An RNA of 177 nucleotides, treated with 2A3 and DMS and read out base by base. The RNA was probed in 150 mM KOAc, 10 mM MgCl2 and 150 mM bicine (pH 8.5) at 24 C. The DMS profile rests on 6,381 reads. For 2A3, 4,205 sequencing reads were counted. DMS adducts were read by reverse transcription with MarathonRT.

RNA sequence: GGGAACGACUCGAGUAGAGUCGAAAAGCCUACGGUUAGAUGCUUGAAUUUCUUUGGUGGCAUUCUGUCGACACAUGGAAGAUUGAUUUUAGGUAAGAUGUAUCUCCAGCUAUUGAACGCGGGAAAGCAUAAACUUUCUGUUCGCAGAAAGUUUAUGAAAAGAAACAACAACAACAAC
Reactivity to 2A3 in 0.01 (KOAc 150mM, MgCl2 10mM, bicine 150mM(pH8.5), 24C), signal-to-noise 4, nucleotides 027 to 126: g030c000c000u020a030c040g050g030u070u110a030g010a080u040g040c020u040u110g060a120a140u110u070u050c040u060u080u090g060g000u050g020g000c010a030u070u070c010u050g040u010c040g060a030c010a010c010a080u060g040g000a050a020g050a080u050u100g050a050u050u130u070u100a050g000g050u050a050a040g020a070u080g040u090a060u000c020u000c020c000a020g000c000u020a060u110u160g060a050a010c040g020c010g060g010g020a070a030a010g020
Reactivity to DMS in 0.01 (KOAc 150mM, MgCl2 10mM, bicine 150mM(pH8.5), 24C), signal-to-noise 5, nucleotides 027 to 126: g020c020c000u000a070c130g020g010u000u010a050g010a080u000g010c040u010u000g010a110a090u010u010u010c040u000u000u000g000g030u010g010g000c030a070u000u010c080u010g020u000c040g010a090c100a060c100a080u000g010g000a060a060g000a080u000u010g000a100u010u010u000u000a080g010g000u010a060a050g000a070u010g010u000a060u000c050u000c020c030a070g010c060u000a170u010u010g010a070a080c110g010c050g000g010g000a080a080a100g010